[RMDB]
RNA sequence: GGGAACGACUCGAGUAGAGUCGAAAAGGGGUCCGUGGGAGAGGAUACGCGAGCUCGCUAUGAAGCAUCUGAAGCCUCCACGGAUGUGGAGCGAGCUCAUCCUCAUCGAUCACGGACGGAGGCACCCAAAAGUCUCAUAACUUCGGUUAUGAGACAACGAGGACAAAUGGUUCGCCAUUUGUCCUCGAAAAGAAACAACAACAACAAC
Reactivity to 2A3 in 0.01 (KOAc 150mM, MgCl2 10mM, bicine 150mM(pH8.5), 24C), signal-to-noise 2, nucleotides 027 to 156: g050g010g090g080u000c000c010g000u030g010g020g000a040g000a010g010g020a030u110a120c220g000c060g240a000g010c000u030c000g010c010u070a240u300g000a000a000g010c000a000u010c010u020g040a070a010g000c000c000u000c000c000a020c000g000g000a000u000g000u000g010g000a010g000c000g000a010g000c040u010c000a000u020c000c000u010c000a040u220c000g000a000u000c000a000c000g000g000a000c000g000g000a000g020g000c000a030c040c000c020a000a090a040a070g000u000c010u010c000a000u010a000a000c000u020u090c300g070g000u010u000a000u000g000a000g000a000c000a000a000